[RMDB]
RNA sequence: GGGAACGACUCGAGUAGAGUCGAAAACAUCUUUCCUCCCUACAUAGUGACUCCAGCUUGGGAGGGGCAGGGCUAGGCUGAGCCAGCACUCCCUGUGGUGUCUGCCUGCCACGUGCAGCUCUGGAGUAAAACCUGGAGAAGUUCGCUUCUCCAGGAACGAUUCUAUCAUGUUCGCAUGAUAGAAUCGAAAAGAAACAACAACAACAAC
Reactivity to 2A3 in 0.01 (KOAc 150mM, MgCl2 10mM, bicine 150mM(pH8.5), 24C), signal-to-noise 5, nucleotides 027 to 156: c030a110u100c060u080u160u060c010c010u060c000c000c000u120a130c110a150u200a030g100u060g070a010c000u000c000c000a010g010c030u040u070g010g000g010a010g010g000g000g010c010a000g000g000g010c030u300a020g010g000c010u030g040a030g180c080c010a030g040c020a020c040u070c020c000c010u010g020u030g030g010u020g150u020c010u020g010c010c000u020g030c020c030a140c150g150u150g020c020a040g000c020u030c020u090g000g000a000g010u010a000a050a000a000c000c000u000g000g000a000g000a010a000g010u040u160c200g030c130u000u000c000u000c000c000a000g000g000a000a000
Reactivity to DMS in 0.01 (KOAc 150mM, MgCl2 10mM, bicine 150mM(pH8.5), 24C), signal-to-noise 2, nucleotides 027 to 156: c090a120u010c050u010u010u000c040c000u000c010c010c010u000a140c090a150u000a090g020u000g000a080c020u000c020c030a150g010c090u000u000g030g020g010a060g030g000g000g010c030a080g000g020g020c000u010a070g000g030c030u000g000a300g020c030c050a070g040c020a040c010u000c020c020c030u010g030u000g000g010u010g000u000c010u000g020c000c050u000g000c000c040a080c110g000u010g010c030a100g020c080u000c040u010g000g010a050g000u000a070a060a120a150c000c010u000g020g000a020g010a030a030g020u000u000c300g010c000u000u000c010u000c000c000a000g000g030a010a020

An RNA of 207 nucleotides, treated with 2A3 and DMS and read out base by base. For DMS the reverse transcriptase was MarathonRT. It was measured as part of the RMDB library M2RFOK. Reactivities are given for positions 27 through 156. The DMS profile rests on 3,838 reads. For 2A3 the reverse transcriptase was SuperScript II with manganese.